An RNA of 177 nucleotides, treated with 2A3 and DMS and read out base by base. It was measured as part of the RMDB libraries RFM100 and RFMREP. The reactions ran in a buffer of 150 mM KOAc, 10 mM MgCl2 and 150 mM bicine (pH 8.5), at 24 C. Reactivities are given for positions 27 through 126.

[RMDB]
RNA sequence: GGGAACGACUCGAGUAGAGUCGAAAAACACCGUACGCGGUGAGGCUUAUAGAAUUUUGAUUGUUGCUCUGAGAGUUAAUAUAAUUUCAAUGAUAACUGUCUAACAACCAUCAAAUUUCAAAGCGAACGGGUGAUAUUAUUUCGAUAAUAUCACCCGAAAAGAAACAACAACAACAAC
Reactivity to 2A3 in 0.01 (KOAc 150mM, MgCl2 10mM, bicine 150mM(pH8.5), 24C), signal-to-noise 8, nucleotides 027 to 126: a000c010a000c000c000g020u040a050c300g000c020g100g000u020g030a060g130g000c020u080u050a120u060a300g000a000a020u020u030u000u010g000a000u000u000g000u000u000g010c070u020c060u090g010a020g010a000g030u030u020a080a040u100a080u060a200a270u110u290u190c150a100a060u090g020a000u030a010a010c000u010g080u120c000u020a060a060c020a000a000c000c000a010u000c000a010a000a000u010u010u000c000a020a010a000g000c000g030a080a020
Reactivity to DMS in 0.01 (KOAc 150mM, MgCl2 10mM, bicine 150mM(pH8.5), 24C), signal-to-noise 3, nucleotides 027 to 126: a150c000a010c010c010g030u000a070c190g050c030g010g050u000g000a090g010g000c010u000u000a090u020a110g000a010a000u010u000u010u010g010a010u000u000g000u010u000g000c130u000c140u020g020a020g000a030g010u000u000a030a070u020a160u010a080a100u040u040u040c190a090a070u020g010a040u010a000a000c010u000g000u000c000u010a070a060c000a000a000c000c030a010u000c000a000a000a020u000u000u010c000a050a060a060g010c010g000a070a140